[RMDB]
Background
An RNA of 177 nucleotides, treated with DMS and 2A3 and read out base by base. For DMS the reverse transcriptase was MarathonRT. The RNA was probed in 150 mM KOAc, 10 mM MgCl2 and 150 mM bicine (pH 8.5) at 24 C.

RNA sequence: GGGAACGACUCGAGUAGAGUCGAAAAUUGGUUACGAGCUAUUGCACCACCGCGAAGAGAUUAAGCGUCCGCAAAUGUACGCCGACUAUCAAGGCUUUGACGCGGCGUUGCUCGCUACCUUAAUGGCUACAGAGCAUUCUUUCGAGAAUGCUCUGUAAAAAGAAACAACAACAACAAC
Reactivity to DMS in 0.01 (KOAc 150mM, MgCl2 10mM, bicine 150mM(pH8.5), 24C), signal-to-noise 2, nucleotides 027 to 126: u000u000g010g000u000u000a030c000g020a060g000c010u030a080u010u000g000c130a160c090c090a040c110c010g040c010g010a130a090g010a100g000a090u010u000a110a300g000c030g000u000c050c170g000c120a020a110a060u000g000u000a000c020g000c020c030g030a150c180u020a090u000c070a060a150g000g020c110u000u020u000g010a140c230g020c010g000g000c060g020u000u000g020c000u000c010g010c030u000a010c020c010u010u010a060a080u000g000g000c160
Reactivity to 2A3 in 0.01 (KOAc 150mM, MgCl2 10mM, bicine 150mM(pH8.5), 24C), signal-to-noise 1, nucleotides 027 to 126: u080u030g020g030u000u030a000c010g030a010g010c010u110a060u140u130g000c040a020c060c020a040c000c000g020c040g000a090a090g080a000g000a080u070u120a130a000g010c000g000u070c030c000g130c090a000a120a160u140g030u060a000c050g030c000c000g030a050c040u100a080u230c040a090a010g100g020c040u030u040u040g030a000c010g000c060g000g000c000g000u000u010g010c000u030c000g000c000u040a010c030c020u170u130a180a100u170g100g000c010

The data come from the RNA Mapping Database (RMDB), library OK2TST. Values are in units of 0.01, from 0 to 300, in steps of 10.